RNA sequence: GGGAACGACUCGAGUAGAGUCGAAAAGAAAGCCCUAAAGCUUUGCUAACCAAGCUGUCCUAGAAAUGGGAUGGUGGCCAGGUGAAAGACCUUGGGUACGGUAAAAUCAGCAAAGAUGCAACAAUGGGCAAUCCGCAGCCAAGCUCCUACGGGCUGUUCCUUUGUUAAACUUCGGUUUAACAAAGGAAAAAGAAACAACAACAACAAC
Reactivity to 2A3 in 0.01 (KOAc 150mM, MgCl2 10mM, bicine 150mM(pH8.5), 24C), signal-to-noise 1, nucleotides 027 to 156: g040a050a080a000g000c000c000c000u020a000a000a040g020c000u020u000u000g000c000u010a000a000c000c080a040a010g000c010u000g010u000c000c000u040a020g020a070a140a120u120g000g000g010a000u020g000g000u060g030g020c020c000a010g000g030u000g020a060a030a010g070a020c030c070u140u180g020g000g000u040a090c030g000g000u000a010a020a040a030u040c040a010g000c000a000a000a000g000a020u000g030c300a300a020c020a050a030u010g010g000g030c020a000a070u080c060c070g030c020a000g000c010c000a060a030g020c090u060c100c010u120a070c050g040g040g000c010u010g020u020